RNA sequence: GGGAACGACUCGAGUAGAGUCGAAAAACCAUGGCGCAGGCAGCUCCUGGCCUGGCAAGACCUUUGACCACGAAGCCUCCGUUUUGGCCGGGGAUGCGUCGUGGUCAAUCGUCUCUGUACACCGGCCGAGCGUUCAAGGAUUCGUCCUUGAACGCUCAAAAGAAACAACAACAACAAC
Reactivity to DMS in 0.01 (KOAc 150mM, MgCl2 10mM, bicine 150mM(pH8.5), 24C), signal-to-noise 1, nucleotides 027 to 126: a120c000c020a050u020g000g000c030g050c010a010g050g000c070a100g020c080u000c050c010u010g000g000c000c000u000g010g000c050a040a000g020a000c000c030u000u000u010g010a060c000c000a020c000g000a030a060g000c000c010u000c000c000g000u000u000u030u050g030g020c220c000g000g000g000g030a090u010g000c000g000u000c000g000u000g020g010u000c010a000a000u000c150g000u000c020u000c200u010g030u020a120c160a150c060c040g000g010c060c090
Reactivity to 2A3 in 0.01 (KOAc 150mM, MgCl2 10mM, bicine 150mM(pH8.5), 24C), signal-to-noise 4, nucleotides 027 to 126: a000c030c000a050u060g050g010c060g000c050a030g050g030c030a020g000c040u040c030c010u030g000g000c000c010u010g030g010c000a010a000g000a010c010c000u000u000u010g010a010c010c000a000c020g010a010a000g020c010c000u010c010c020g060u030u080u180u270g190g020c060c010g010g000g000g010a030u150g000c010g040u010c000g000u000g000g000u000c010a000a000u000c000g010u010c000u000c020u010g020u040a070c040a050c070c030g040g000c010c000
This 177-nucleotide RNA was probed chemically with DMS and 2A3. Source: RMDB library RFM100, as collected in RNAgym. The DMS profile rests on 2,147 reads. The reactions ran in a buffer of 150 mM KOAc, 10 mM MgCl2 and 150 mM bicine (pH 8.5), at 24 C. For 2A3 the reverse transcriptase was SuperScript II with manganese.